Structure probing data (DMS and 2A3) for a 177-nucleotide construct. In probing experiments dimethyl sulfate is read out at A N1 and C N3, which are open when not base-paired. The reactions ran in a buffer of 150 mM KOAc, 10 mM MgCl2 and 150 mM bicine (pH 8.5), at 24 C.

RNA sequence: GGGAACGACUCGAGUAGAGUCGAAAAGAUCGCUACCGUGCUGGCCUGGCACGACGCCCUCAAUGCCGCCGACAUUGAGACCCUCGUGGCGUUGUCUACUGACGACAUCGACAUCGGUGACGCGCACGCUAAUGACAGAUUUCGAUCUGUCAUUAGCAAAAGAAACAACAACAACAAC
Reactivity to DMS in 0.01 (KOAc 150mM, MgCl2 10mM, bicine 150mM(pH8.5), 24C), signal-to-noise 5, nucleotides 027 to 126: g000a060u000c100g000c040u000a060c110c020g010u000g000c030u010g030g000c090c030u020g000g000c070a060c080g000a070c070g000c030c040c010u010c040a030a050u010g000c060c040g000c040c030g010a120c060a070u000u000g000a130g000a100c060c010c030u020c060g000u010g000g000c040g050u000u010g000u000c010u030a100c090u040g010a070c050g010a100c050a060u000c070g000a150c170a120u020c030g000g000u010g010a050c030g010c040g000c070a090c110
Reactivity to 2A3 in 0.01 (KOAc 150mM, MgCl2 10mM, bicine 150mM(pH8.5), 24C), signal-to-noise 9, nucleotides 027 to 126: g060a050u130c060g000c060u060a060c040c020g050u030g030c010u060g040g130c010c040u050g030g000c010a010c030g040a010c030g020c020c010c000u020c020a020a040u060g020c020c020g030c030c010g030a030c030a040u040u060g030a030g020a080c020c010c000u040c040g060u080g040g000c020g000u050u200g030u010c040u110a120c080u140g050a050c050g040a040c020a140u110c070g060a070c030a090u050c030g030g010u020g010a020c020g020c000g000c020a030c090